[RMDB]
RNA sequence: GGGAACGACUCGAGUAGAGUCGAAAAGAUAUGGAAAUUUGGGAGCCUUUGGUCGGAAACGACCAUAGGCGACGAUCAUGUUUCCUAAGUCAAAAGCUAACGAAUAACUUCGGUUAUUCGUUAGCAAGAUGUAUAACGUCUUCGGACGUUAUACAUCAAAAGAAACAACAACAACAAC
Reactivity to DMS in 0.01 (KOAc 150mM, MgCl2 10mM, bicine 150mM(pH8.5), 24C), signal-to-noise 3, nucleotides 027 to 126: g010a020u000a020u010g000g000a010a010a000u000u000u000g000g000g000a020g020c000c000u000u010u000g000g020u000c010g020g010a000a010a010c000g010a010c000c000a000u000a000g020g020c000g010a050c200g010a140u010c000a010u000g000u000u000u000c000c000u000a000a110g010u000c010a100a090a120a170g000c000u000a000a010c000g000a010a000u000a000a000c000u000u010c220g030g000u000u000a000u000u000c000g000u000u000a000g010c000a020a020
Reactivity to 2A3 in 0.01 (KOAc 150mM, MgCl2 10mM, bicine 150mM(pH8.5), 24C), signal-to-noise 2, nucleotides 027 to 126: g000a010u010a010u050g000g000a010a000a000u010u020u020g000g000g000a010g000c010c000u020u020u020g010g000u010c010g010g000a040a010a010c000g000a000c010c030a000u020a000g000g000c010g040a030c000g000a000u010c010a010u010g010u000u000u000c000c000u000a000a000g010u000c020a110a050a040a060g000c000u000a000a000c000g010a000a000u000a000a000c020u040u110c300g110g000u000u010a010u000u000c010g000u000u000a000g000c000a000a000

Record summary
An RNA of 177 nucleotides, treated with DMS and 2A3 and read out base by base. Values cover nucleotides 27 to 126. The RNA was probed in 150 mM KOAc, 10 mM MgCl2 and 150 mM bicine (pH 8.5) at 24 C. The 2A3 profile rests on 14,800 reads.